[RMDB]
RNA sequence: GGGAACGACUCGAGUAGAGUCGAAAAGAUAUGGACUUACCAGGGAGCUCUAUAUCGGAAACGAUAUAAGAGCAUCGAUCUGGCGGAGUCCUAAGUCAAAACUCACACAUCCUUCGGGAUGUGUGAGGGUGGAUCAUAUGUUCGCAUAUGAUCCACCAAAAGAAACAACAACAACAAC
Reactivity to DMS in 0.01 (KOAc 150mM, MgCl2 10mM, bicine 150mM(pH8.5), 24C), signal-to-noise 2, nucleotides 027 to 126: g000a020u000a030u020g000g000a010c000u010u000a050c010c000a020g010g000g000a070g030c000u000c000u000a030u000a010u000c000g010g010a030a010a010c000g000a000u000a000u010a030a080g040a020g040c000a090u000c290g000a030u000c010u000g000g000c030g020g000a000g010u000c000c000u010a000a100g000u010c010a080a030a130a300c020u000c000a000c000a010c000a040u000c000c000u020u000c250g030g020g020a000u000g000u000g000u000g000a010g000
Reactivity to 2A3 in 0.01 (KOAc 150mM, MgCl2 10mM, bicine 150mM(pH8.5), 24C), signal-to-noise 3, nucleotides 027 to 126: g010a000u010a000u060g000g000a000c000u010u040a030c030c010a000g040g000g000a030g010c000u000c000u000a000u000a000u010c010g000g020a010a010a000c000g000a000u010a000u040a130a170g000a000g000c000a010u090c010g010a020u010c000u010g040g110c260g300g080a000g020u000c000c000u000a000a000g010u000c000a000a080a080a210c000u010c000a000c010a000c000a000u000c010c030u070u130c300g210g000g000a000u000g000u000g000u000g010a010g000

Structure probing data (DMS and 2A3) for a 177-nucleotide construct.
For DMS the reverse transcriptase was MarathonRT.
The RNA was probed in 150 mM KOAc, 10 mM MgCl2 and 150 mM bicine (pH 8.5) at 24 C.
The 2A3 profile rests on 8,610 reads.